[RMDB]
This 177-nucleotide RNA was probed chemically with DMS and 2A3. It was measured as part of the RMDB library OK2TRN. The DMS profile rests on 3,289 reads.
RNA sequence: GGGAACGACUCGAGUAGAGUCGAAAAGAGAAGGUGCCGCGGCGGCUGUCCUGCCCCGACAAGCGCACCAGCUUGCCUUCGGCCACCAGCGAGCCCAGCGCCAGCAGCUCGCCAAAGGCCCAGUCGACCGGUAUAUAUUCUUCGGAAUAUAUACCGGAAAAGAAACAACAACAACAAC
Reactivity to DMS in 0.01 (KOAc 150mM, MgCl2 10mM, bicine 150mM(pH8.5), 24C), signal-to-noise 5, nucleotides 027 to 126: g010a150g010a070a070g010g020u000g000c010c040g030c300g020g020c120g000g010c030u010g000u010c160c100u000g000c000c010c020c040g000a060c120a060a110g000c160g010c040a070c080c040a050g000c010u000u000g000c010c010u000u020c080g000g000c050c040a040c150c160a150g010c020g010a030g000c010c040c120a170g020c010g000c150c150a090g010c030a150g000c020u010c010g020c010c070a040a150a160g000g000c020c020c110a120g000u010c090g010a180
Reactivity to 2A3 in 0.01 (KOAc 150mM, MgCl2 10mM, bicine 150mM(pH8.5), 24C), signal-to-noise 2, nucleotides 027 to 126: g030a010g020a150a070g000g000u010g030c000c010g040c040g030g010c100g000g050c040u050g130u200c030c080u040g010c010c010c010c000g080a100c070a140a030g000c050g000c110a020c020c010a020g020c000u040u220g020c000c000u040u130c000g000g000c020c000a050c030c020a010g010c000g000a000g000c000c030c060a040g020c030g020c020c030a020g000c010a000g010c000u030c010g010c000c010a080a180a090g010g040c030c010c020a080g130u110c060g140a080